[RMDB]
RNA sequence: GGGAACGACUCGAGUAGAGUCGAAAAGAUAUGGACAUCACUAGUUCGAAGUAAGCGUUGAAAUGUCAUGGAAUCGGAAACGAUUCCAUGACAUGGAGCUUACCUCUCGAACAUGAUGUCCUAAGUCCAAUAUGAAGCAGUUCGCUGCUUCAUAUUGAAAAGAAACAACAACAACAAC
Reactivity to 2A3 in 0.01 (KOAc 150mM, MgCl2 10mM, bicine 150mM(pH8.5), 24C), signal-to-noise 4, nucleotides 027 to 126: g050a010u110a060u230g010g000a000c010a000u000c010a010c170u270a160g020u000u000c010g000a300a020g000u010a010a000g000c020g100u100u040g040a110a130a020u000g000u000c000a000u000g000g010a010a010u000c010g000g070a050a110a100c020g000a000u000u000c000c000a000u000g000a000c000a000u000g000g000a000g000c000u000u010a000c010c000u020c010u000c000g000a000a000c000a000u000g000a000u010g000u000c000c000u010a030a000g000u020c010
Reactivity to DMS in 0.01 (KOAc 150mM, MgCl2 10mM, bicine 150mM(pH8.5), 24C), signal-to-noise 8, nucleotides 027 to 126: g000a100u000a300u000g000g010a010c000a010u000c000a030c300u010a150g010u000u000c000g020a010a190g010u000a000a000g010c000g000u000u020g000a140a160a010u000g000u000c000a010u000g010g010a020a000u000c000g010g000a110a110a200c010g000a010u000u000c000c000a000u000g000a000c000a000u000g010g000a100g010c000u000u000a010c010c040u010c100u000c000g010a000a010c010a090u000g010a020u000g010u000c000c000u000a010a090g010u000c040

The data come from the RNA Mapping Database (RMDB), library TTRINS. Structure probing data (2A3 and DMS) for a 177-nucleotide construct. DMS adducts were read by reverse transcription with MarathonRT. The DMS profile rests on 15,648 reads. Conditions: 150 mM KOAc, 10 mM MgCl2 and 150 mM bicine (pH 8.5), 24 C.